[RMDB]
RNA sequence: GGGAACGACUCGAGUAGAGUCGAAAAAUGGAUUGUAGGCGCCGCCCUAUACCUUGUCUGCCUCCCCGCGGUGCAUGGAGCCGGGCCACCUCGACCUGAAUGGAAGCCGGCGGCACCUCGCUAACGGGGAGUACUCAAAGUUCGCUUUGAGUACUCCAAAAGAAACAACAACAACAAC
Reactivity to DMS in 0.01 (KOAc 150mM, MgCl2 10mM, bicine 150mM(pH8.5), 24C), signal-to-noise 2, nucleotides 027 to 126: a080u020g010g020a090u010u010g010u000a020g020g000c020g010c040c060g020c070c010c010u010a080u000a040c080c090u010u000g000u000c090u010g000c080c030u000c020c000c000c030g030c140g000g040u000g010c030a090u000g030g000a180g020c020c010g010g030g000c020c040a070c080c040u000c010g030a110c110c080u000g010a110a080u010g030g000a200a120g000c020c050g000g040c010g000g020c020a010c000c000u000c040g020c090u000a070a080c140g030g010

Source: RMDB library OK2TRN, as collected in RNAgym. Chemical mapping of a 177-nucleotide RNA with DMS. In probing experiments dimethyl sulfate is read out at A N1 and C N3, which are open when not base-paired. The RNA was probed in 150 mM KOAc, 10 mM MgCl2 and 150 mM bicine (pH 8.5) at 24 C.